[RMDB]
Structure probing data (DMS and 2A3) for a 177-nucleotide construct. For 2A3 the reverse transcriptase was SuperScript II with manganese. Source: RMDB library M2PK50, as collected in RNAgym. The 2A3 profile rests on 1,113 reads. Values cover nucleotides 27 to 126. For DMS the reverse transcriptase was MarathonRT.
RNA sequence: GGGAACGACUCGAGUAGAGUCGAAAAUCGAUGGCGUUCGCGCCAUCGAAGAGCCGAACCGCGUAGCACGCGGAUAGGAGUGAAGAUAUCCAAGGCCAUGGAGGAGGCGUGCUUUCGAGCACGCCAAAUCCUUUGGUGAGUUCGCUCACCAAAGGAUAAAAGAAACAACAACAACAAC
Reactivity to DMS in 0.01 (KOAc 150mM, MgCl2 10mM, bicine 150mM(pH8.5), 24C), signal-to-noise 3, nucleotides 027 to 126: u000c000g000a020u010g010g000c000g070u000u020c250g000c030g010c000c000a000u000c000g030a010a030g000a170g010c000c000g000a080a230c000c010g010c000g010u000a120g020c150a300c020g020c020g000g000a050u000a080g010g000a070g000u000g010a100a060g000a110u000a070u000c040c040a080a090g000g000c050c070a140u000g000g030a030g000g010a300g010g000c000g030u000g020c010u000u000u010c180g020a040g040c000a020c000g030c000c000a010a090
Reactivity to 2A3 in 0.01 (KOAc 150mM, MgCl2 10mM, bicine 150mM(pH8.5), 24C), signal-to-noise 1, nucleotides 027 to 126: u000c000g010a000u010g010g000c040g040u000u060c230g000c010g000c090c010a010u020c000g010a000a050g040a030g000c040c000g030a040a020c000c010g000c000g040u020a040g080c180a010c070g000c020g000g000a020u130a030g000g000a010g080u130g110a070a080g020a100u080a050u090c000c000a010a010g080g000c000c010a070u080g070g030a080g000g060a020g000g010c010g040u000g010c050u070u110u130c200g050a000g000c010a000c020g000c000c000a000a000